[RMDB]
RNA sequence: GGGAACGACUCGAGUAGAGUCGAAAAAAACAGGAGGAGGAUCGGUAGAAAAGAGCGAGACCUCCGAUUCGAGAGCUCCUGGACUCCUCGGCUCUGGAGUCCUCCGACCCGUGAGGUCGAGGAUCCCGUCUUUUAUCUAGUUCGCUAGAUAAAAGACAAAAGAAACAACAACAACAAC
Reactivity to 2A3 in 0.01 (KOAc 150mM, MgCl2 10mM, bicine 150mM(pH8.5), 24C), signal-to-noise 3, nucleotides 027 to 126: a000a000a000c020a000g000g000a020g010g030a010g010g000a010u000c000g010g040u200a030g090a070a130a090a020g100a030g070c090g030a040g070a080c020c000u000c000c010g000a020u000u020c040g010a040g050a040g230c000u000c000c010u000g020g030a020c020u020c000c000u000c010g010g000c010u000c020u060g030g010a080g030u020c000c020u050c020c050g010a000c000c000c010g090u110g040a100g000g050u020c000g000a010g010g010a010u000c000c000c000
Reactivity to DMS in 0.01 (KOAc 150mM, MgCl2 10mM, bicine 150mM(pH8.5), 24C), signal-to-noise 3, nucleotides 027 to 126: a030a040a040c010a000g000g000a040g010g020a170g020g000a040u000c020g010g000u010a060g000a110a070a080a090g010a070g020c090g000a110g010a190c130c000u000c000c000g010a020u000u000c000g010a160g010a150g000c000u000c000c000u000g000g020a060c070u000c080c010u000c020g010g000c030u010c030u000g000g000a050g000u000c010c060u020c160c080g000a010c020c000c030g000u000g000a080g010g000u000c000g000a020g000g010a050u000c000c000c010